[RMDB]
RNA sequence: GGGAACGACUCGAGUAGAGUCGAAAAGGGAGUCCCUCUCCCCGGCGCCAUUUUGCUGGACUUCUACGAGGCGCUUCGGAGGGGUCAGUAUUGGAGAGUGAGAGUGGGGAAAUGUCUUCAAUACACGCAGUGAUGACUACUUCGGUAGUCAUUAUUGAAAAGAAACAACAACAACAAC
Reactivity to DMS in 0.01 (KOAc 150mM, MgCl2 10mM, bicine 150mM(pH8.5), 24C), signal-to-noise 9, nucleotides 027 to 126: g010g000g000a100g010u020c070c010c000u010c010u000c010c000c130c140g010g010c030g010c020c010a060u020u020u030u020g010c080u010g000g010a150c120u020u020c040u010a070c080g010a080g000g010c040g000c030u010u020c300g000g000a020g010g010g000g000u010c050a070g010u000a000u000u000g000g000a020g000a120g010u020g010a090g000a080g000u010g000g000g000g000a080a100a100u020g010u000c000u000u000c010a030a030u000a030c010a160c220g010
Reactivity to 2A3 in 0.01 (KOAc 150mM, MgCl2 10mM, bicine 150mM(pH8.5), 24C), signal-to-noise 9, nucleotides 027 to 126: g030g010g020a050g050u060c000c000c000u000c000u000c000c000c000c010g000g000c000g010c000c010a030u050u070u120u300g030c050u090g010g070a120c030u160u020c020u130a040c040g050a050g010g000c000g000c000u020u020c020g000g000a000g000g010g000g000u030c020a010g000u010a010u010u010g000g000a010g000a010g030u120g030a090g010a020g050u150g010g020g000g010a010a050a060u120g050u000c000u000u000c000a010a000u020a020c020a000c070g030

An RNA of 177 nucleotides, treated with DMS and 2A3 and read out base by base. It was measured as part of the RMDB library OK1LIB. For 2A3 the reverse transcriptase was SuperScript II with manganese.